[RMDB]
RNA sequence: GGGAACGACUCGAGUAGAGUCGAAAAUUCGUGGUCUCCUGUCAAUCACAGGAUACCAAUUGCACACUGGGCGGUACACCGCUCACAGUAUUGACUUAAGUCGGUGGUAGGUCUGUGUGGAGAUCGACCGUACCGGAUGGUUCGCCAUCCGGUACGGAAAAGAAACAACAACAACAAC
Reactivity to 2A3 in 0.01 (KOAc 150mM, MgCl2 10mM, bicine 150mM(pH8.5), 24C), signal-to-noise 1, nucleotides 027 to 126: u030u000c040g020u090g010g000u000c000u000c000c000u000g160u130c120a110a130u120c020a020c000a000g010g000a010u000a000c040c010a000a090u060u030g000c030a020c000a000c050u030g030g030g010c000g040g030u170a060c290a090c070c000g030c000u010c000a030c000a000g000u000a150u110u190g100a020c010u110u200a250a020g030u040c030g000g000u050g030g010u030a020g060g070u000c040u020g030u000g030u030g010g030a020g000a000u010c030g000a040
Reactivity to DMS in 0.01 (KOAc 150mM, MgCl2 10mM, bicine 150mM(pH8.5), 24C), signal-to-noise 1, nucleotides 027 to 126: u010u000c120g000u010g000g010u000c020u000c010c040u000g010u010c150a100a130u040c090a020c000a010g000g010a030u000a000c020c020a070a040u010u010g020c180a150c110a050c100u020g000g000g040c030g010g020u010a120c300a130c010c000g040c000u020c000a040c130a050g000u000a060u000u000g010a060c010u000u000a170a100g000u000c030g000g040u010g010g020u000a090g000g020u000c010u010g000u010g040u060g030g020a050g000a020u010c040g000a100